[RMDB]
RNA sequence: GGGAACGACUCGAGUAGAGUCGAAAAGAUGUUCUUUGGUGUGGGUACAUCGGGUGGCACAACAAUUACUAUGACGCAUCAUGGUGGUUGUGAACUCGUGGCUUGAUGCGUCAAGUUAUGAGUGUUCUUUGUUACUGUACCCACAGUGAUAAAGAAACGCAUCGGUAGUAUUCGUACUACCGAUGCGAAAAGAAACAACAACAACAAC
Reactivity to 2A3 in 0.01 (KOAc 150mM, MgCl2 10mM, bicine 150mM(pH8.5), 24C), signal-to-noise 3, nucleotides 027 to 156: g100a060u130g030u060u030c010u010u040u090g120g020u040g020u010g010g000g000u020a000c000a060u040c080g070g040g000u100g050g000c010a000c000a020a090c010a050a220u060u060a030c030u040a120u150g010a030c010g040c050a030u010c000a000u040g040g040u050g020g070u020u040g090u060g180a080a000c010u010c100g040u070g110g000c040u010u010g000a010u010g010c030g080u010c000a010a010g000u000u010a000u020g010a020g030u000g020u070u080c000u030u040u040g040u040u050a050c050u020g000u000a000c000c000c000a000c000a000g000u010g010a030u070a100a020a000g040a030a030a000
Reactivity to DMS in 0.01 (KOAc 150mM, MgCl2 10mM, bicine 150mM(pH8.5), 24C), signal-to-noise 1, nucleotides 027 to 156: g000a100u010g030u000u000c010u000u000u000g050g000u000g080u020g010g020g050u000a030c010a040u000c030g000g020g020u000g000g040c040a060c050a060a100c070a090a040u000u000a030c030u000a040u000g030a150c150g030c160a080u000c000a030u000g030g020u000g010g000u000u000g020u000g000a040a050c100u000c040g050u000g030g000c020u000u000g020a070u000g000c270g010u010c020a010a010g020u010u000a010u020g000a130g020u000g040u000u000c040u000u000u000g000u010u010a040c050u000g000u000a100c030c050c020a140c010a010g020u010g000a070u000a030a010a080g000a040a050a290
Chemical mapping of a 207-nucleotide RNA with 2A3 and DMS. For 2A3, 1,970 sequencing reads were counted. For DMS, 3,245 sequencing reads were counted. 2A3 is a SHAPE reagent: it acylates the 2'-hydroxyl of flexible nucleotides of all four kinds. The RNA was probed in 150 mM KOAc, 10 mM MgCl2 and 150 mM bicine (pH 8.5) at 24 C. For DMS the reverse transcriptase was MarathonRT.